[RMDB]
RNA sequence: GGGAACGACUCGAGUAGAGUCGAAAAUCAUGCUAUCACAAGCUAACUGGUUGACGUCCAGUUAGUUCUGAGCGAGAGUUCAGGACAAAUCUUUGACGUCAACGAAGACUUUGUCGUGAUAGCAUGCCUAGUUGAAUGAAUUCGUUCAUUCAACUAGAAAAGAAACAACAACAACAAC
Reactivity to 2A3 in 0.01 (KOAc 150mM, MgCl2 10mM, bicine 150mM(pH8.5), 24C), signal-to-noise 7, nucleotides 027 to 126: u120c000a000u000g000c000u000a000u000c000a000c010a040a030g020c010u040a030a020c010u040g050g000u010u010g020a010c000g010u000c000c010a000g000u010u020a010g000u000u000c000u000g000a000g000c000g000a050g000a000g030u000u000c000a000g000g000a000c000a000a070a010u010c020u030u030u100g010a010c010g020u020c010a000a010c000g020a040a000g050a070c080u050u060u090g070u090c060g000u000g000a000u000a000g000c000a000u000g000c000
Reactivity to DMS in 0.01 (KOAc 150mM, MgCl2 10mM, bicine 150mM(pH8.5), 24C), signal-to-noise 9, nucleotides 027 to 126: u020c010a000u000g010c000u000a000u000c000a000c010a110a080g000c050u000a050a070c030u000g010g010u000u000g000a030c070g010u000c000c300a020g000u000u000a100g000u000u000c000u000g010a010g010c000g000a190g000a150g000u000u000c000a000g000g000a000c000a020a030a040u000c010u000u010u000g010a040c040g010u000c050a020a030c010g000a060a020g000a090c140u000u000u000g010u000c120g010u000g000a010u000a000g000c000a000u000g010c300